Record summary:
An RNA of 207 nucleotides, treated with 2A3 and read out base by base. For 2A3, 599 sequencing reads were counted. Source: RMDB library M2RFPK, as collected in RNAgym.
RNA sequence: GGGAACGACUCGAGUAGAGUCGAAAACUUAUCCGGUUUUAACGCUGUUUUAUUGGCGCAAAGGUUUACGGAUAAACAACUAAUAAUCAAACCUUUUGUGUGCGAAACGUGGUUGUUUAACGUACUCACUGCCCCCAGGGAUUCGUCCCUGGGGGAAUCAACCGGAAAGAUUCGUCUUUCCGGUUGAAAAAGAAACAACAACAACAAC
Reactivity to 2A3 in 0.01 (KOAc 150mM, MgCl2 10mM, bicine 150mM(pH8.5), 24C), signal-to-noise 1, nucleotides 027 to 156: c020u030u020a000u020c000c010g040g000u000u000u000u060a020a020c010g000c010u030g140u130u170u110u280a200u280u300g000g000c030g050c020a050a040a000g020g040u030u000u000a010c000g000g000a020u060a080a060a030c050a020a030c010u160a040a140u140a220a030u130c020a010a010a000c010c000u050u150u080u060g040u010g010u020g010c060g100a200a090a010c060g010u050g000g040u090u000g030u030u030u020a010a000c010g010u010a000c020u020c050a060c080u060g010c000c020c000c000c020a010g000g000g020a020u000u060c130g050u020c090c000c010u000g010g030g000g000g010a000a000